Chemical mapping of a 177-nucleotide RNA with DMS. The RNA was probed in 150 mM KOAc, 10 mM MgCl2 and 150 mM bicine (pH 8.5) at 24 C. For DMS the reverse transcriptase was MarathonRT.

RNA sequence: GGGAACGACUCGAGUAGAGUCGAAAAGAUAUGGACAAUCGUUGCCUGUUGGUUCUUUUGACGAGCGAGGUGUCGGAAACGACACGUAGCUCGAUAAGAACCACCAGGCAACGAUUGUCCUAAGUCACAUGUUUCUACACUUCGGUGUAGAAACAUGAAAAGAAACAACAACAACAAC
Reactivity to DMS in 0.01 (KOAc 150mM, MgCl2 10mM, bicine 150mM(pH8.5), 24C), signal-to-noise 1, nucleotides 027 to 126: g010a060u000a300u000g000g010a000c010a010a000u000c000g000u000u000g000c010c000u010g030u010u010g010g010u000u000c010u000u000u000u010g000a200c170g000a020g000c000g000a260g020g000u010g000u010c010g020g020a160a130a220c010g000a020c020a010c010g020u000a300g010c010u000c000g000a050u000a020a000g020a010a000c000c000a010c010c000a030g000g000c010a030a000c000g010a000u000u000g000u000c000c000u010a020a020g000u010c010a280